Structure probing data (DMS and 2A3) for a 177-nucleotide construct. For DMS the reverse transcriptase was MarathonRT.

RNA sequence: GGGAACGACUCGAGUAGAGUCGAAAAAACAAGGUGCUGGUGGUGUUGGCGGGGUCCUGGUAUACCUGCAGCAAACGCCACGGCGCCCGGGAAAUGACUUCGGGUACCGAGAGCUGCACGGGAUAGCCCGUCGAUUAUGAUUCGUCAUAAUCGACGGAAAAGAAACAACAACAACAAC
Reactivity to DMS in 0.01 (KOAc 150mM, MgCl2 10mM, bicine 150mM(pH8.5), 24C), signal-to-noise 1, nucleotides 027 to 126: a120a030c050a140a130g010g020u000g010c000u000g010g050u000g020g000u010g020u000u000g000g020c000g000g000g030g000u010c070c070u010g000g000u010a070u000a050c000c020u000g000c010a040g000c030a080a060a080c060g010c040c050a080c000g000g010c000g050c000c010c020g020g000g010a100a080a070u020g010a150c060u000u000c030g000g000g020u020a040c030c010g000a100g030a130g010c040u000g000c040a060c020g010g000g020a080u000a080g010c100
Reactivity to 2A3 in 0.01 (KOAc 150mM, MgCl2 10mM, bicine 150mM(pH8.5), 24C), signal-to-noise 1, nucleotides 027 to 126: a000a000c070a050a020g040g000u070g000c000u190g070g020u020g010g000u030g020u090u080g060g000c040g000g000g000g020u060c030c060u110g060g010u140a090u080a170c020c000u020g000c010a070g000c000a140a000a020c040g000c020c010a010c000g010g000c010g000c000c030c020g010g040g050a050a170a190u160g070a070c030u130u060c140g000g010g020u010a070c030c020g000a030g000a020g020c020u050g000c000a010c040g020g000g010a080u120a040g050c040
Conditions: 150 mM KOAc, 10 mM MgCl2 and 150 mM bicine (pH 8.5), 24 C.